[RMDB]
RNA sequence: GGGAACGACUCGAGUAGAGUCGAAAACGACACGGCCCAGUCGGCGUCUUACAGGCCGCGCUCUGUGCGGUCCGAGCCCGCCAUGAGCACCACGGUGGCCAGCAGCGACGUGACUCCGGCCAGGGGCUUCCGUCUAGCCAGGGCCUUGGCGUCGCCCCGGAAUGUGACUAUUCGUAGUCACAUUCCGAAAAGAAACAACAACAACAAC
Reactivity to 2A3 in 0.01 (KOAc 150mM, MgCl2 10mM, bicine 150mM(pH8.5), 24C), signal-to-noise 1, nucleotides 027 to 156: c010g030a000c050a000c040g010g000c020c000c000a000g180u030c020g010g040c060g000u020c080u110u060a180c120a120g000g010c000c000g030c000g000c000u070c050u160g200u300g040c010g010g010u010c010c250g030a070g080c000c000c000g000c000c000a080u130g030a000g010c070a000c090c070a060c090g190g030u100g050g050c010c010a020g070c030a030g160c000g080a110c030g070u080g020a050c040u000c050c000g050g080c030c000a100g060g000g020g000c010u050u040c030c030g150u120c060u100a010g000c080c000a040g010g050g030c110c000u050u060g040g010c030g000u000c030g070c010c000c000
Annotation: Conditions: 150 mM KOAc, 10 mM MgCl2 and 150 mM bicine (pH 8.5), 24 C. Structure probing data (2A3) for a 207-nucleotide construct. The 2A3 profile rests on 603 reads. It was measured as part of the RMDB library OK3TST. Reactivities are given for positions 27 through 156. For 2A3 the reverse transcriptase was SuperScript II with manganese. 2A3 is a SHAPE reagent: it acylates the 2'-hydroxyl of flexible nucleotides of all four kinds.